[RMDB]
RNA sequence: GGGAACGACUCGAGUAGAGUCGAAAACUGAGUCUUCGGACUCAGAAAUUCGAUGAUGAGCCUCCAUCCCAUGCUGAAGGGUGAUGAGUGCACAUCAGGCUGAGCAAAACAUCUCCUUCGGGAGAUGGUUUAAAUGCGCGUUCGCGCGCAUUUAAACAAAAGAAACAACAACAACAAC
Reactivity to DMS in 0.01 (KOAc 150mM, MgCl2 10mM, bicine 150mM(pH8.5), 24C), signal-to-noise 2, nucleotides 027 to 126: c010u000g010a000g030u010c000u000u000c260g040g010a000c000u010c000a000g010a080a090a140u000u000c020g000a110u000g000a050u010g010a040g000c000c010u000c050c050a060u010c000c000c080a120u000g050c300u000g000a170a060g010g000g000u000g000a100u010g010a010g000u000g030c040a080c010a020u000c000a010g000g010c060u000g000a100g030c180a080a050a090a260c000a020u000c000u000c000c000u010u010c150g040g000g030a000g000a000u000g000
Reactivity to 2A3 in 0.01 (KOAc 150mM, MgCl2 10mM, bicine 150mM(pH8.5), 24C), signal-to-noise 2, nucleotides 027 to 126: c000u000g000a000g000u000c000u030u140c300g140g020a000c000u000c010a000g010a040a110a000u110u050c040g030a020u020g000a030u000g010a000g010c010c000u000c020c000a020u020c000c030c030a100u240g090c110u230g110a190a200g010g020g020u040g020a080u130g020a020g040u300g020c010a000c000a000u020c010a010g080g030c090u190g050a030g040c050a040a000a020a120c000a000u000c000u020c010c030u040u050c140g080g000g010a000g000a000u010g000